The record gives the reactivity of an RNA of 207 nucleotides to 2A3 and DMS. The RNA was probed in 150 mM KOAc, 10 mM MgCl2 and 150 mM bicine (pH 8.5) at 24 C. 2A3 adducts were read by reverse transcription with SuperScript II with manganese. Reactivities are given for positions 27 through 156.
RNA sequence: GGGAACGACUCGAGUAGAGUCGAAAAGGUGCUCUGAAUGGAGUGCUCUACUGAGAUUAUAAAAUAGAAGGUAAGCUAUUAUCUCUUACAACAGGGCAGGGCUAGUUGGAAUAGGCGGUAAAGUCUAAAAACUACCUCACCUUCGGGUGAGGUAGAACCUUAGAUUUAAGUUCGCUUAAAUCUAAGGAAAAGAAACAACAACAACAAC
Reactivity to 2A3 in 0.01 (KOAc 150mM, MgCl2 10mM, bicine 150mM(pH8.5), 24C), signal-to-noise 3, nucleotides 027 to 156: g030g020u020g000c010u010c010u100g190a130a100u240g010g010a030g020u050g000c010u020c030u030a070c080u060g010a010g010a060u080u090a060u250a140a110a090a010u070a070g040a150a010g090g000u120a080a020g000c010u020a020u150u030a040u130c040u000c020u040u100a080c040a110a030c020a080g000g010g070c010a000g030g020g000c040u050a030g020u010u020g030g000a070a060u020a070g030g020c020g030g000u080a040a040a010g030u030c040u070a040a070a020a040a020c000u000a000c000c000u000c010a000c000c000u010u040c090g070g010g000u000g000a000g000g000u010a000g000a000a000
Reactivity to DMS in 0.01 (KOAc 150mM, MgCl2 10mM, bicine 150mM(pH8.5), 24C), signal-to-noise 1, nucleotides 027 to 156: g030g020u010g040c000u020c040u000g010a210a080u010g020g000a050g040u000g020c030u010c000u000a070c050u000g000a110g000a100u000u000a160u010a060a050a050a140u020a100g000a090a090g020g020u010a060a110g010c100u000a080u000u000a060u000c030u000c040u000u000a070c030a050a100c060a110g010g030g000c030a020g040g040g000c030u000a020g000u010u020g050g020a100a090u000a050g000g020c000g020g050u000a040a070a120g000u000c040u020a060a010a050a090a100c000u000a000c000c010u000c050a010c000c020u000u000c300g080g000g060u010g000a040g030g000u000a000g000a010a040